The data come from the RNA Mapping Database (RMDB), library TTRDES.
This 177-nucleotide RNA was probed chemically with DMS and 2A3.
The reactions ran in a buffer of 150 mM KOAc, 10 mM MgCl2 and 150 mM bicine (pH 8.5), at 24 C.
Values cover nucleotides 27 to 126.
RNA sequence: GGGAACGACUCGAGUAGAGUCGAAAAGAUAUGGAAUAGAAGGGCUUUUGACGCUGACACGUCGGAAACGACGUGGGUAGCGAUAAGCCUGGUAUUCCUAAGUCAAAAGGAUCGCUUCGGCGAUCCAUCUAACCCUUCGGUUCGCCGAAGGGUUAGAAAAAGAAACAACAACAACAAC
Reactivity to DMS in 0.01 (KOAc 150mM, MgCl2 10mM, bicine 150mM(pH8.5), 24C), signal-to-noise 4, nucleotides 027 to 126: g020a030u010a300u010g010g000a000a000u000a010g010a300a300g010g000g020c000u000u000u010u010g030a220c070g020c000u000g000a040c000a010c000g010u000c000g010g010a060a070a110c000g010a000c000g010u000g000g000g030u000a010g020c020g020a160u000a010a030g010c000c010u010g010g020u010a010u000u000c000c000u000a090a150g000u010c040a120a040a110a130g010g000a010u000c010g010c000u000u000c250g050g000c010g000a010u000c020c010a030
Reactivity to 2A3 in 0.01 (KOAc 150mM, MgCl2 10mM, bicine 150mM(pH8.5), 24C), signal-to-noise 2, nucleotides 027 to 126: g020a020u090a040u190g010g050a000a000u020a070g160a210a100g080g020g010c000u070u150u210u290g250a210c050g040c010u020g020a010c010a000c000g000u030c000g000g030a060a090a030c000g000a000c000g010u030g000g020g040u020a000g000c000g080a070u090a050a000g010c000c010u000g000g030u000a010u010u000c000c010u000a220a020g060u040c020a070a020a050a280g000g000a000u020c000g010c070u070u140c300g120g000c000g000a010u000c000c000a000
The DMS profile rests on 3,312 reads. DMS adducts were read by reverse transcription with MarathonRT.